This 207-nucleotide RNA was probed chemically with 2A3 and DMS. For DMS, 3,201 sequencing reads were counted. 2A3 adducts were read by reverse transcription with SuperScript II with manganese. The RNA was probed in 150 mM KOAc, 10 mM MgCl2 and 150 mM bicine (pH 8.5) at 24 C. For DMS the reverse transcriptase was MarathonRT.
RNA sequence: GGGAACGACUCGAGUAGAGUCGAAAAGGCAGGACUUACCAAGUCUGGGGGCCGAUGAGGGUUGGCUCAAAGUAGGGUUUUGACUUGAAAACUCAAGCUGUGACCCCAAAACGAUUGAGGUAAAUGAAAAAUCCAUCUGCCUUCGGGCAGAUGGAAACCAAUUCUAAUUGUUCGCAAUUAGAAUUGGAAAAGAAACAACAACAACAAC
Reactivity to 2A3 in 0.01 (KOAc 150mM, MgCl2 10mM, bicine 150mM(pH8.5), 24C), signal-to-noise 4, nucleotides 027 to 156: g040g000c040a020g000g030a020c030u080u080a110c080c060a070a010g040u020c030u080g010g000g020g050g000c060c080g030a050u100g050a060g000g040g020u030u050g020g000c020u030c050a070a080a010g040u070a060g050g040g000u030u050u130u120g060a080c010u020u010g040a080a050a070a100c070u020c020a000a010g000c040u070g020u120g100a050c000c000c020c020a040a080a030a030c060g090a090u030u110g010a040g050g040u130a090a110a080u160g080a030a070a050a010a010u000c000c000a000u000c000u000g000c020c000u010u030c150g020g000g000c000a000g010a010u000g000g000a010a000a000
Reactivity to DMS in 0.01 (KOAc 150mM, MgCl2 10mM, bicine 150mM(pH8.5), 24C), signal-to-noise 2, nucleotides 027 to 156: g000g020c070a120g030g000a070c060u020u030a110c060c050a060a140g010u000c010u000g020g000g030g040g070c010c030g030a100u010g010a120g010g020g010u000u000g010g000c060u000c030a040a060a070g010u000a170g010g000g040u000u000u000u020g020a050c030u020u000g000a070a100a080a180c150u010c020a050a040g040c000u000g000u000g000a190c000c020c010c020a050a040a070a100c040g020a170u000u000g000a050g010g020u000a060a070a100u020g000a000a040a050a070a100u000c010c000a010u000c000u010g010c000c010u000u010c300g050g010g030c000a010g000a000u010g000g000a000a010a020